Chemical mapping of a 177-nucleotide RNA with DMS.
[RMDB]
RNA sequence: GGGAACGACUCGAGUAGAGUCGAAAAAAAGAUAUGGACCUCAGGGAGAUUACGUAUGACGAAGAACACGCUCGGAAACGAGCGUGGGAGUCAUAUUGUAAUCGAAGAACUGAGGUCCUAAGUCAAACAAACUGCAUAGGUUCGCCUAUGCAGUUUGAAAAGAAACAACAACAACAAC
Reactivity to DMS in 0.01 (KOAc 150mM, MgCl2 10mM, bicine 150mM(pH8.5), 24C), signal-to-noise 2, nucleotides 027 to 126: a150a080a080g000a040u000a300u000g010g020a020c000c000u000c000a020g010g030g000a120g010a000u000u000a000c020g000u000a000u010g020a020c000g030a130a120g000a090a210c000a000c010g000c000u000c010g010g000a070a050a170c020g000a010g000c000g020u000g020g000g000a050g000u000c010a010u000a000u010u030g040u000a010a000u000c000g000a090a130g000a110a140c020u000g000a000g000g000u000c000c000u000a000a100g010u000c010a110a080a300
DMS adducts were read by reverse transcription with MarathonRT. Source: RMDB library TTRDES, as collected in RNAgym. For DMS, 2,047 sequencing reads were counted. The reactions ran in a buffer of 150 mM KOAc, 10 mM MgCl2 and 150 mM bicine (pH 8.5), at 24 C.